[RMDB]
RNA sequence: GGGAACGACUCGAGUAGAGUCGAAAAGCUGAACGAGGGCUUCGCCUCCUACGUGGAGUACCUGGGUGCGGACUACGCGGAGCCCACCUGGAAUCUGAAGGACCUCAUGGUGCUGAACGACGUGUACUAAGUCACCUUAGUUCGCUAAGGUGACUUAAAAAGAAACAACAACAACAAC
Reactivity to 2A3 in 0.01 (KOAc 150mM, MgCl2 10mM, bicine 150mM(pH8.5), 24C), signal-to-noise 2, nucleotides 027 to 126: g010c000u030g060a090a020c020g020a030g030g010g030c000u000u000c000g000c030c010u050c030c000u090a220c260g190u290g020g010a000g000u030a030c000c020u050g020g010g000u060g030c170g000g030a040c030u140a090c140g030c040g090g000a010g000c000c000c000a000c010c010u010g000g050a020a060u050c060u040g010a010a020g100g090a150c000c000u000c000a070u110g020g050u070g000c020u000g000a080a010c020g080a000c040g040u090g030u050a060c030
Reactivity to DMS in 0.01 (KOAc 150mM, MgCl2 10mM, bicine 150mM(pH8.5), 24C), signal-to-noise 3, nucleotides 027 to 126: g030c030u010g020a160a100c150g010a060g010g000g000c020u000u000c030g020c280c030u000c000c000u000a070c270g040u020g010g010a010g000u000a180c170c000u000g010g000g010u000g000c170g010g010a140c050u010a100c090g020c040g010g000a170g000c000c010c000a000c000c020u000g000g000a070a140u000c180u000g010a050a040g010g010a140c020c010u000c070a050u030g030g010u010g020c020u000g010a060a160c090g000a060c090g020u000g000u010a100c150